[RMDB]
RNA sequence: GGGAACGACUCGAGUAGAGUCGAAAAGUUCGCUGCAAACCGCCGACUGCGACGGCAGGCCCACUCUCUUGGCAUGCGUCCAAUGCUGCGACGUCCUCGGUAGACAAGCUCACGCUUGGCUUCAUGCCGAAUUAUUAAACUUCGGUUUAAUAAUUCGAAAAGAAACAACAACAACAAC
Reactivity to 2A3 in 0.01 (KOAc 150mM, MgCl2 10mM, bicine 150mM(pH8.5), 24C), signal-to-noise 9, nucleotides 027 to 126: g050u070u050c030g010c050u070g040c050a060a090a110c050c030g020c010c020g070a090c050u070g020c040g050a070c020g060g020c020a030g040g030c000c020c000a060c010u090c000u010c030u060u090g030g000c030a030u090g030c040g030u030c010c020a050a050u150g010c020u030g010c030g030a030c040g040u030c000c010u050c040g040g030u070a040g010a040c020a030a020g010c030u070c060a060c110g020c000u020u020g020g000c000u070u050c030a070u100g020c020
Reactivity to DMS in 0.01 (KOAc 150mM, MgCl2 10mM, bicine 150mM(pH8.5), 24C), signal-to-noise 9, nucleotides 027 to 126: g010u010u010c030g030c020u010g020c070a040a100a140c080c050g000c020c020g000a090c090u010g010c050g010a080c090g010g020c020a060g010g000c020c010c070a090c080u000c040u010c040u010u010g000g000c030a050u020g020c100g010u010c020c030a060a080u020g010c020u010g010c040g010a080c070g000u000c010c010u000c080g010g020u010a040g000a040c020a050a070g000c010u010c150a110c200g010c010u010u000g000g000c030u010u000c040a060u020g010c140